The record gives the reactivity of an RNA of 177 nucleotides to DMS. High DMS reactivity at an A or C suggests that its Watson-Crick edge is free.
RNA sequence: GGGAACGACUCGAGUAGAGUCGAAAAAGUGGCGCGCGAGAAUGAAGGGCGCGUCUUGUCCGCUGCCGCCUUCCUUCCCGCCUGCAGACGCUCCCGCGUCUUGCGCCAAGAGAGAGACGCGAACGAGCAGUCCCACCUAGUUCGCUAGGUGGGACUGAAAAGAAACAACAACAACAAC
Reactivity to DMS in 0.01 (KOAc 150mM, MgCl2 10mM, bicine 150mM(pH8.5), 24C), signal-to-noise 2, nucleotides 027 to 126: a050g000u030g000g000c030g000c150g010c030g000a140g010a040a090u000g010a060a040g010g020g000c000g000c020g000u040c010u020u000g010u040c020c020g030c040u050g070c040c060g000c000c040u010u000c020c090u000u000c040c000c020g000c040c060u000g000c070a030g010a170c060g030c000u000c040c160c030g000c030g000u000c010u000u020g070c060g020c020c070a130a080g020a090g000a180g020a040g000a040c000g040c030g020a120a130c130g010a040g000
It was measured as part of the RMDB library OK1LIB.